[RMDB]
The data come from the RNA Mapping Database (RMDB), library OK3TST. This 207-nucleotide RNA was probed chemically with 2A3. The 2A3 profile rests on 1,117 reads.

RNA sequence: GGGAACGACUCGAGUAGAGUCGAAAAUCUGAGGCCUUUCAGGUUAGGGAGAUUUCUGCAUGGGCCCAGCUAUGGGGAAGGGCUGGCCAAGGGCCAAGGGGUUGGGGGGUGCAUGCAGCUGAUCACGCCCCUGACUCAGUCAGGCCCUGCUCUGACCGAUAUAGAUGAUGUUCGCAUCAUCUAUAUCAAAAGAAACAACAACAACAAC
Reactivity to 2A3 in 0.01 (KOAc 150mM, MgCl2 10mM, bicine 150mM(pH8.5), 24C), signal-to-noise 2, nucleotides 027 to 156: u070c050u040g000a030g060g020c020c030u080u080u090c080a050g000g030u080u160a060g040g020g010a080g020a070u070u070u040c030u040g000c030a060u060g030g030g000c010c000c000a010g050c030u060a080u170g000g000g000g040a070a040g010g010g040c030u030g040g050c010c040a100a060g070g030g000c020c000a020a040g090g010g020g010u150u100g020g000g000g000g020g030u000g020c030a020u060g000c000a060g040c050u130g040a040u080c000a020c050g300c010c000c020c000u000g000a010c000u000c030a020g050u020c060a010g000g000c000c030c010u010g000c000u020c030u010g020a030c020c040